Conditions: 150 mM KOAc, 10 mM MgCl2 and 150 mM bicine (pH 8.5), 24 C. This 207-nucleotide RNA was probed chemically with DMS and 2A3.
[RMDB]
RNA sequence: GGGAACGACUCGAGUAGAGUCGAAAAAUCUUUCAGCAAACCUACAAAGGACUUUUUUGUGGGCUAAUGUAGCCAUGUAUUUGCCAGACAAAUACAAGAAAACACCAAACAAUGUUGAUCUUCCUGCCAACACAAAUUCUUAUGGUUAUAUUAAUGGCGCGAUGUAAUAAUUCGUUAUUACAUCGCGAAAAGAAACAACAACAACAAC
Reactivity to DMS in 0.01 (KOAc 150mM, MgCl2 10mM, bicine 150mM(pH8.5), 24C), signal-to-noise 1, nucleotides 027 to 156: a120u000c000u010u000u010c100a130g040c030a150a120a070c010c000u000a030c000a000a020a100g060g010a280c160u000u010u000u000u000u010g030u010g000g010g040c010u020a020a010u010g010u010a030g020c010c000a110u000g000u000a030u010u000u000g020c010c040a300g000a120c020a020a060a230u010a110c070a050a020g000a080a120a070a020c020a090c030c040a140a070a120c120a020a070u030g010u000u020g000a140u000c010u000u000c020c040u000g030c030c000a100a130c140a020c030a000a000a000u010u010c030u000u010a050u000g010g020u000u010a010u000a050u000u010a070a140u000g060g050
Reactivity to 2A3 in 0.01 (KOAc 150mM, MgCl2 10mM, bicine 150mM(pH8.5), 24C), signal-to-noise 4, nucleotides 027 to 156: a010u040c050u030u100u080c040a010g050c030a040a090a120c000c000u020a030c020a050a060a050g080g060a160c170u270u240u060u010u060u090g020u040g010g010g000c020u080a070a050u080g030u070a010g000c000c010a030u050g010u000a010u000u010u010g020c070c080a050g020a250c020a060a010a000u050a020c010a020a010g060a020a070a000a000c080a010c050c050a080a080a030c030a080a190u090g000u010u020g020a050u030c020u000u030c000c010u010g050c010c010a040a010c040a030c020a060a080a070u150u040c050u040u140a070u090g030g000u050u000a070u000a020u120u100a090a100u100g080g000
For DMS, 1,816 sequencing reads were counted. 2A3 adducts were read by reverse transcription with SuperScript II with manganese. For DMS the reverse transcriptase was MarathonRT. Source: RMDB library OK3TST, as collected in RNAgym.